This 177-nucleotide RNA was probed chemically with 2A3 and DMS. The RNA was probed in 150 mM KOAc, 10 mM MgCl2 and 150 mM bicine (pH 8.5) at 24 C.
[RMDB]
RNA sequence: GGGAACGACUCGAGUAGAGUCGAAAAGAGCACGUCGCCGAGCGGGAUGCGGCAGGCGCUCAGAUCAGCCUCAUAGUUGCGAACCCGGAUAUCAUGAAACGGUUUGUUGCUCACCACCAUGACGUCGGAUAAUGCACAACUUCGGUUGUGCAUUAUCAAAAGAAACAACAACAACAAC
Reactivity to 2A3 in 0.01 (KOAc 150mM, MgCl2 10mM, bicine 150mM(pH8.5), 24C), signal-to-noise 1, nucleotides 027 to 126: g020a010g040c030a010c070g070u050c060g020c020c010g040a080g070c060g070g090g000a050u130g010c010g000g020c020a020g000g050c060g000c050u070c030a060g030a150u120c040a010g010c010c000u070c060a100u140a110g040u090u130g020c000g010a060a110c000c000c000g040g020a040u080a030u150c110a070u140g040a080a060a000c030g020g020u000u060u110g130u110u050g010c010u000c000a020c000c010a020c020c000a020u050g040a020c060g060u170c040g060
Reactivity to DMS in 0.01 (KOAc 150mM, MgCl2 10mM, bicine 150mM(pH8.5), 24C), signal-to-noise 4, nucleotides 027 to 126: g010a030g000c030a030c060g000u010c100g010c000c030g010a170g040c060g010g000g000a150u010g010c040g010g020c040a100g010g010c110g010c080u000c040a070g000a160u010c080a100g030c060c030u000c100a090u000a110g000u010u000g030c040g010a090a150c010c010c030g020g000a090u000a080u000c060a050u000g000a080a060a090c150g000g000u000u000u000g010u010u000g010c020u010c050a070c020c010a090c100c020a020u000g000a020c140g020u010c090g010